[RMDB]
Chemical mapping of a 177-nucleotide RNA with DMS and 2A3. The data come from the RNA Mapping Database (RMDB), library OK2TRN. For DMS, 4,590 sequencing reads were counted. For DMS the reverse transcriptase was MarathonRT.

RNA sequence: GGGAACGACUCGAGUAGAGUCGAAAAUGUGAAAGUCCCAGGGCAAAGGUAGAGCUUUUUGUGGACUAUCUCACUCAAUUCAUCAAAUUCUUAGCCCUGUUAAUUGGGAAGGUUCCAGAGGAUGUGCCACAGCUACUCUAUUCGUAGAGUAGCUGUGAAAAGAAACAACAACAACAAC
Reactivity to DMS in 0.01 (KOAc 150mM, MgCl2 10mM, bicine 150mM(pH8.5), 24C), signal-to-noise 4, nucleotides 027 to 126: u000g010u000g000a050a060a060g020u010c000c020c020a060g010g000g020c010a070a070a100g010g020u010a110g010a200g010c020u000u000u010u010u010g030u010g020g000a060c080u010a070u010c090u000c020a040c030u000c140a080a070u010u000c040a040u000c050a070a070a100u000u000c040u010u000a180g000c010c010c000u000g010u000u010a050a110u010u010g000g010g010a070a070g010g010u000u000c020c010a080g010a130g000g010a030u000g010u000g000c140
Reactivity to 2A3 in 0.01 (KOAc 150mM, MgCl2 10mM, bicine 150mM(pH8.5), 24C), signal-to-noise 4, nucleotides 027 to 126: u120g020u000g010a060a050a000g020u000c020c010c000a010g050g000g020c060a120a100a100g150g050u180a060g100a090g090c000u070u090u080u140u140g100u190g010g000a010c010u070a130u110c060u020c020a010c010u050c020a040a130u120u040c010a060u010c010a070a070a120u170u010c020u060u090a080g000c000c000c010u010g070u170u180a200a170u190u070g020g000g020a050a040g050g000u060u000c020c010a000g010a030g090g010a010u040g020u080g090c030